[RMDB]
RNA sequence: GGGAACGACUCGAGUAGAGUCGAAAAGGGAUGGGAUCCGAAGCCCCAUUGAGUGAUAAUACAGGCUCUCCCAUCCAACUCCUAUUCCAACACGUCCUCGUCGUACAGAGUGGUAACAUGUGUCACCUAUACUAAUGACCGUUCGCGGUCAUUAGAAGGAUAUGUAAGGGUUCGCCCUUACAUAUCCAAAAGAAACAACAACAACAAC
Reactivity to 2A3 in 0.01 (KOAc 150mM, MgCl2 10mM, bicine 150mM(pH8.5), 24C), signal-to-noise 6, nucleotides 027 to 156: g100g010g000a000u010g010g000g010a020u150c070c060g050a070a020g040c020c000c020c010a110u170u210g090a090g080u110g060a090u100a260a050u170a120c080a040g000g000c000u000c000u000c010c000c000a000u000c000c000a000a050c020u000c000c010u060a130u100u100c030c040a050a020c050a040c070g060u050c020c010u040c030g060u020c020g020u080a060c060a050g040a050g060u090g030g040u090a090a030c050a110u120g060u010g030u070c030a060c070c020u060a050u090a250c000u000a030a000u000g000a000c010c000g000u010u040c190g020c010g110g000u000c000a000u000u000a000g000a040a030
Reactivity to DMS in 0.01 (KOAc 150mM, MgCl2 10mM, bicine 150mM(pH8.5), 24C), signal-to-noise 2, nucleotides 027 to 156: g030g030g010a060u000g010g020g000a100u000c070c030g000a100a090g020c000c010c000c030a140u000u000g010a110g020u000g010a160u000a070a140u000a100c060a070g020g030c010u000c030u000c010c000c000a040u000c050c010a030a040c050u000c040c010u000a300u000u000c040c030a050a080c050a070c010g010u000c030c000u010c040g000u020c030g000u000a110c050a160g000a110g010u000g020g010u000a030a090c060a110u000g050u010g000u000c020a030c020c040u010a140u010a180c000u000a020a010u000g000a030c000c010g030u000u000c300g000c000g010g010u000c000a000u000u000a010g000a070a180

Source information:
Conditions: 150 mM KOAc, 10 mM MgCl2 and 150 mM bicine (pH 8.5), 24 C. This 207-nucleotide RNA was probed chemically with 2A3 and DMS. It was measured as part of the RMDB library M2RFPK.